[RMDB]
RNA sequence: GGGAACGACUCGAGUAGAGUCGAAAAAUCAUGUGCUUCCUGUGAAGGGAUACUAUUCCAUGGUCUGGGAGGGAAUAACAUCCGAUAAUGUGAGGGAGAGUUUUGGAGAACACUUUGCUGAGGAUUAAAACUAUUCAAUUUUCGAAUUGAAUAGUUUAAAAGAAACAACAACAACAAC
Reactivity to DMS in 0.01 (KOAc 150mM, MgCl2 10mM, bicine 150mM(pH8.5), 24C), signal-to-noise 9, nucleotides 027 to 126: a080u010c060a060u010g010u010g010c100u000u000c010c010u010g020u020g020a160a090g010g000g010a050u000a070c110u000a090u000u000c050c010a080u000g010g010u000c060u000g000g010g010a100g000g000g000a080a040u000a060a080c110a060u000c040c030g000a100u000a070a070u010g000u000g010a110g000g010g010a070g010a080g010u000u000u000u010g010g010a110g000a060a070c080a050c070u000u000u000g000c050u000g010a110g010g010a110u010u000a060
Reactivity to 2A3 in 0.01 (KOAc 150mM, MgCl2 10mM, bicine 150mM(pH8.5), 24C), signal-to-noise 5, nucleotides 027 to 126: a000u070c040a040u070g040u060g070c010u040u040c000c010u030g050u070g120a100a060g040g000g000a010u030a120c030u040a090u070u030c020c030a040u080g010g020u050c020u040g010g020g020a070g030g020g050a010a040u070a070a020c020a070u020c020c000g020a020u060a140a060u120g030u050g040a030g000g030g000a080g010a010g030u040u030u100u160g090g020a080g010a050a000c020a010c030u050u090u090g000c020u010g040a020g030g010a050u090u160a050